[RMDB]
An RNA of 207 nucleotides, treated with DMS and read out base by base. Source: RMDB library OK3TST, as collected in RNAgym.

RNA sequence: GGGAACGACUCGAGUAGAGUCGAAAAUGUAGUCCCAGCUGCUUGGGAGGCUGAGGCUAGCGAAUUGCUUGAACCCAGAAGGUGGAGGUUGCAAUGAGCCAAGAUCACGCCACUGCACUCUAGGUGACAGAGCAGGAAUCCGUCUCAAAAAAUAAAAUGAGGAUAAUUUAUUCGUAAAUUAUCCUCAAAAAGAAACAACAACAACAAC
Reactivity to DMS in 0.01 (KOAc 150mM, MgCl2 10mM, bicine 150mM(pH8.5), 24C), signal-to-noise 2, nucleotides 027 to 156: u010g050u000a080g020u000c020c010c000a170g030c050u000g020c020u000u050g030g040g000a230g030g020c020u010g020a030g050g030c030u000a060g040c090g000a130a150u000u000g020c030u010u000g020a130a110c030c000c030a270g020a070a130g010g090u000g000g010a060g020g020u010u020g010c040a040a080u000g010a180g020c010c040a080a080g010a080u000c030a070c060g020c030c020a060c020u000g010c000a070c020u000c000u040a100g050g000u000g000a050c030a090g000a110g010c020a160g030g020a080a160u010c020c000g010u010c000u010c030a000a000a090a060a100a130u000a040a060a090a170